[RMDB]
RNA sequence: GGGAACGACUCGAGUAGAGUCGAAAAAGCUGCACGCCUGUGUCCGCCAAUAAAUCAGCUAGCGUUUUGCUGUUAUUCAUGGGUUGAUUCGGUAGCGAAAAAUAGGGAAUAUGGAUCGCUGUAUUGCUGGAUAUCUGCAGUUCGCUGCAGAUAUCCAAAAAGAAACAACAACAACAAC
Reactivity to DMS in 0.01 (KOAc 150mM, MgCl2 10mM, bicine 150mM(pH8.5), 24C), signal-to-noise 1, nucleotides 027 to 126: a150g020c050u010g010c100a060c050g000c060c040u020g000u000g020u010c010c040g020c050c050a030a070u000a050a080a110u000c020a040g000c020u000a050g020c080g040u010u000u010u020g010c050u000g020u000u020a090u000u000c080a050u020g010g000g020u000u000g020a050u000u000c040g030g000u000a060g020c010g010a020a040a090a090a070u000a050g000g000g000a100a050u000a030u000g000g010a300u000c040g050c010u000g010u010a050u020u000g020c110
This 177-nucleotide RNA was probed chemically with DMS. Reactivities are given for positions 27 through 126. For DMS the reverse transcriptase was MarathonRT. The DMS profile rests on 990 reads.